The record gives the reactivity of an RNA of 207 nucleotides to 2A3 and DMS.
For DMS the reverse transcriptase was MarathonRT.
The DMS profile rests on 4,738 reads.
It was measured as part of the RMDB library OK3TST.
For 2A3, 3,618 sequencing reads were counted.
Conditions: 150 mM KOAc, 10 mM MgCl2 and 150 mM bicine (pH 8.5), 24 C.
RNA sequence: GGGAACGACUCGAGUAGAGUCGAAAACAAAAUAUCAAGGAUGAGAGGACGAGAGAUAUCGCUGAUACAAAGAACACGAUCUUAGGUUCAACAUGCCCCUCACGUCCGGUCGAUCAGGAGACCGCGCAAUAUCUGAGAUACAACGCACAUGUGCUCGAGAUGUCAUGUUAUUCGUAACAUGACAUCUAAAAGAAACAACAACAACAAC
Reactivity to 2A3 in 0.01 (KOAc 150mM, MgCl2 10mM, bicine 150mM(pH8.5), 24C), signal-to-noise 5, nucleotides 027 to 156: c020a010a070a030a010u150a010u090c050a040a020g050g000a040u060g030a040g010a020g140g020a010c040g020a020g010a000g010a120u040a020u150c060g000c130u050g030a040u100a200c050a060a090a070g060a060a040c100a010c150g050a050u010c020u080u170a040g000g050u040u070c030a050a050c020a090u190g030c020c010c010c000u010c000a030c020g010u000c020c000g000g000u000c000g030a070u130c070a040g080g050a040g020a060c030c000g010c010g000c060a040a050u030a040u180c030u030g010a010g010a020u080a070c050a060a020c100g070c050a040c030a130u130g010u060g040c030u030c030g030
Reactivity to DMS in 0.01 (KOAc 150mM, MgCl2 10mM, bicine 150mM(pH8.5), 24C), signal-to-noise 3, nucleotides 027 to 156: c080a060a110a140a080u000a060u000c070a090a300g020g000a090u010g010a130g000a090g000g000a090c050g020a110g000a080g010a100u010a020u000c060g120c090u000g000a150u030a270c060a070a070a080g000a090a140c060a100c150g000a080u010c040u000u000a070g030g020u010u000c020a050a060c030a060u020g000c000c020c010c010u010c030a070c010g000u010c020c000g010g000u000c020g010a130u000c100a190g030g010a260g000a030c040c010g040c050g000c050a110a110u000a040u000c020u000g000a290g020a080u030a030c010a030a110c050g010c030a060c070a090u000g020u000g020c030u010c050g020